[RMDB]
RNA sequence: GGGAACGACUCGAGUAGAGUCGAAAAAUGUCAUGGCCCUCCAACAAGGCCGUGUGACCUAUGGGGUCGCGGCUGGCUCGGCGAACGCUUACACGUUGACGCUCGUUCCGCAGCUCCAAGGCGGCCUUCUAAAGUUCAAGUUCGCUUGAACUUUAGAAAAAGAAACAACAACAACAAC
Reactivity to 2A3 in 0.01 (KOAc 150mM, MgCl2 10mM, bicine 150mM(pH8.5), 24C), signal-to-noise 4, nucleotides 027 to 126: a000u100g040u080c030a050u050g070g040c020c010c000u060c080c010a070a070c030a080a070g010g000c010c040g010u040g040u050g070a090c010c000u110a300u100g030g000g010g010u070c030g000c010g020g000c040u020g000g000c010u000c010g020g000c010g030a130a020c030g040c190u200u200a050c090a020c070g030u030u030g080a040c070g000c020u050c020g080u150u060c010c000g020c000a010g010c010u010c000c010a020a000g040g000c010g000g010c000c000u000
Reactivity to DMS in 0.01 (KOAc 150mM, MgCl2 10mM, bicine 150mM(pH8.5), 24C), signal-to-noise 5, nucleotides 027 to 126: a080u010g000u020c060a060u010g010g010c010c000c010u000c070c120a100a100c260a110a060g000g010c000c010g020u000g020u000g010a100c020c030u000a100u010g020g000g010g010u000c050g020c010g010g000c300u000g000g000c060u000c040g000g010c000g000a060a050c090g000c120u000u010a090c210a140c050g000u000u000g000a090c130g010c010u000c080g010u010u010c000c000g000c030a050g010c010u000c020c010a030a060g010g000c070g010g000c010c010u000